[RMDB]
RNA sequence: GGGAACGACUCGAGUAGAGUCGAAAAGAUAUGGAGAGCUCUUUGAUCUUAGGUUUCGGAAACGAAACUAAGGGAGAGCCUCCUAAGUCAAAAGACAUCCGAAGUUCUUCGGAACUUCGGAUGUCAAGCGUUAUAAGAUGUUCGCAUCUUAUAACGCAAAAGAAACAACAACAACAAC
Reactivity to 2A3 in 0.01 (KOAc 150mM, MgCl2 10mM, bicine 150mM(pH8.5), 24C), signal-to-noise 2, nucleotides 027 to 126: g020a020u060a060u200g010g010a030g010a100g060c000u040c020u260u300u060g150a190u060c000u030u040a170g150g160u040u020u020c010g000g070a060a020a030c000g000a000a000a000c000u000a000a000g000g010g030a030g000a000g020c000c010u000c000c000u010a070a020g080u000c010a060a070a070a070g010a020c000a000u000c010c050g000a010a000g000u000u050c030u090u150c300g000g010a010a000c000u030u030c010g000g000a020u000g010u000c000a000a010
Reactivity to DMS in 0.01 (KOAc 150mM, MgCl2 10mM, bicine 150mM(pH8.5), 24C), signal-to-noise 1, nucleotides 027 to 126: g000a030u010a300u000g000g000a020g000a200g010c000u000c010u000u000u000g000a070u010c000u000u000a000g000g010u010u000u020c000g010g010a060a100a160c000g000a020a020a020c010u000a010a010g040g000g000a020g000a000g020c000c000u000c000c000u020a040a050g000u010c000a100a080a140a120g000a030c000a010u000c000c000g010a000a000g010u000u000c000u010u040c190g030g010a000a000c000u000u000c010g010g000a000u000g000u000c010a020a070